An RNA of 177 nucleotides, treated with DMS and 2A3 and read out base by base. The data come from the RNA Mapping Database (RMDB), library M2PK50. For 2A3, 3,379 sequencing reads were counted. Conditions: 150 mM KOAc, 10 mM MgCl2 and 150 mM bicine (pH 8.5), 24 C. For DMS, 1,644 sequencing reads were counted.
[RMDB]
RNA sequence: GGGAACGACUCGAGUAGAGUCGAAAAUACCAAUGGUUCGCCAUUGGUACUUGUAUUGACGAAUACUACCGUAGAAGAAUUCAGGUCUCAUAACUACGGAUAUACACUAGAGUUUCGACUCUAGUAACUAUGCUGACCAAUUCGUUGGUCAGCAUAGAAAAGAAACAACAACAACAAC
Reactivity to DMS in 0.01 (KOAc 150mM, MgCl2 10mM, bicine 150mM(pH8.5), 24C), signal-to-noise 2, nucleotides 027 to 126: u000a010c000c000a010a000u000g000g010u000u020c230g020c000c000a000u010u000g010g000u000a020c050u010u000g000u000a040u000u010g010a100c100g000a090a020u000a080c060u000a100c000c020g000u030a010g000a180a110g000a080a130u000u010c210a090g000g000u000c030u000c040a080u000a090a130c010u000a020c020g010g000a240u010a080u010a100c150a020c000u000a000g000a010g020u000u000u010c110g030a030c010u000c000u000a010g000u000a020a110
Reactivity to 2A3 in 0.01 (KOAc 150mM, MgCl2 10mM, bicine 150mM(pH8.5), 24C), signal-to-noise 3, nucleotides 027 to 126: u040a000c000c000a000a000u010g000g040u020u040c190g040c050c010a000u010u010g000g000u010a040c000u020u110g050u040a080u040u070g150a090c090g120a060a010u030a070c020u050a100c000c000g000u020a010g020a180a000g020a030a060u210u160c060a080g060g210u020c010u010c040a110u100a140a060c010u000a000c000g010g050a020u040a000u010a090c060a010c010u000a000g000a000g020u030u140u160c160g090a010c000u000c000u010a000g000u010a010a000